RNA sequence: GGGAACGACUCGAGUAGAGUCGAAAAAGAAUGCACUUGGCACAUCUGGGGAACAGCAGGCAGCUGAUAUCACUGGGCCCACCCCGCACCAGGGAGGAUGGAAGCAGGUAGAGCAGAGCCGGAGCCAUCUGGGAAUAAUUUUCGAAUUAUUCCCAGAAAAAGAAACAACAACAACAAC
Reactivity to 2A3 in 0.01 (KOAc 150mM, MgCl2 10mM, bicine 150mM(pH8.5), 24C), signal-to-noise 2, nucleotides 027 to 126: a000g060a050a040u110g000c030a030c080u090u070g050g010c020a030c000a070u020c060u060g000g000g000g070a110a030c030a050g080c000a010g120g010c010a050g000c020u060g070a080u040a020u160c050a050c040u010g000g050g010c010c010c000a040c000c010c010c000g000c020a060c030c040a030g000g010g020a030g020g020a040u060g020g000a030a010g040c040a030g020g040u060a030g000a010g040c010a000g000a030g050c020c020g020g010a010g020c010c000a030
Reactivity to DMS in 0.01 (KOAc 150mM, MgCl2 10mM, bicine 150mM(pH8.5), 24C), signal-to-noise 5, nucleotides 027 to 126: a050g000a080a090u000g000c040a070c060u000u000g030g010c050a080c080a070u000c030u000g010g000g010g010a090a070c070a030g010c050a080g010g020c070a060g000c040u010g000a090u010a070u010c070a080c040u010g020g000g000c070c020c030a190c060c010c010c060g010c080a100c080c040a070g000g000g010a060g010g010a080u000g000g010a090a130g010c050a030g000g010u010a070g000a080g010c040a050g000a140g010c040c040g020g010a100g010c050c060a080